This 207-nucleotide RNA was probed chemically with 2A3. For 2A3, 830 sequencing reads were counted. The data come from the RNA Mapping Database (RMDB), library VIROID. The reactions ran in a buffer of 150 mM KOAc, 10 mM MgCl2 and 150 mM bicine (pH 8.5), at 24 C. For 2A3 the reverse transcriptase was SuperScript II with manganese.
RNA sequence: GGGAACGACUCGAGUAGAGUCGAAAAUACUCUUUUCUGUAAAGAGGAAACUGCUGGACUCGCCGCCCAAGUUCGAGCAUGAGCCAAUUGCCGAACGAGGGGAACGCGGGAGGAAGGAUCACAUGACGAGAGGGAGUGUAUGGUAAGAGGCGGGGAACAGUAUGUGUGGGUUCGCCCACACAUACUGAAAAGAAACAACAACAACAAC
Reactivity to 2A3 in 0.01 (KOAc 150mM, MgCl2 10mM, bicine 150mM(pH8.5), 24C), signal-to-noise 2, nucleotides 027 to 156: u090a020c010u000c000u070u110u100u090c140u220g210u200a030a000a010g060a070g050g000a060a040a000c100u080g030c020u040g010g050a050c000u020c030g070c050c070g060c000c000c000a010a050g000u000u040c010g010a080g050c000a060u050g020a000g230c060c030a130a200u090u020g000c000c000g010a020a010c010g000a060g020g010g000g010a030a030c050g000c070g010g000g030a010g010g020a030a000g020g030a030u070c020a000c080a080u200g050a030c120g020a030g000a030g170g020g000a130g000u060g000u030a050u120g010g010u060a140a020g000a040g030g030c080g020g000g000g020a050a000